[RMDB]
Source: RMDB library RFMREP, as collected in RNAgym. Chemical mapping of a 177-nucleotide RNA with 2A3 and DMS. For DMS, 1,485 sequencing reads were counted. DMS adducts were read by reverse transcription with MarathonRT. The reactions ran in a buffer of 150 mM KOAc, 10 mM MgCl2 and 150 mM bicine (pH 8.5), at 24 C. For 2A3 the reverse transcriptase was SuperScript II with manganese.
RNA sequence: GGGAACGACUCGAGUAGAGUCGAAAAGGCCAUGGUGCGAGCAGCUUCCACAGCCUGGCAAGACCUUUGACCGCACAGCCUCCGCGUGGCCGGAGAGGCCGUGUGGUCAUUGCGUCAUCCGGCCCAGCUACACGUUGUACUUCGGUACAACGUGUAGAAAAGAAACAACAACAACAAC
Reactivity to 2A3 in 0.01 (KOAc 150mM, MgCl2 10mM, bicine 150mM(pH8.5), 24C), signal-to-noise 2, nucleotides 027 to 126: g030g000c030c010a080u060g020g000u060g020c010g020a080g120c120a040g010c080u190u020c020c020a050c010a040g060c030c000u030g020g040c100a060a090g010a010c000c000u000u010u050g010a000c010c000g000c010a000c000a010g000c000c000u000c010c000g040c100g170u300g150g000c110c040g020g000a170g010a040g020g040c020c020g000u010g010u010g020g000u010c000a000u000u040g030c050g000u000c000a000u060c000c030g050g000c010c020c000a000g010
Reactivity to DMS in 0.01 (KOAc 150mM, MgCl2 10mM, bicine 150mM(pH8.5), 24C), signal-to-noise 2, nucleotides 027 to 126: g030g010c010c040a180u000g000g010u000g030c030g010a100g000c220a200g000c040u020u010c000c000a090c040a140g000c020c010u000g000g000c230a140a100g000a010c010c000u000u000u010g000a010c010c020g020c010a000c020a050g000c010c000u010c000c010g000c110g030u000g000g000c150c030g000g000a070g000a050g020g030c000c010g050u000g000u000g000g000u010c010a010u000u020g000c150g020u000c030a070u020c040c050g010g000c000c000c050a190g000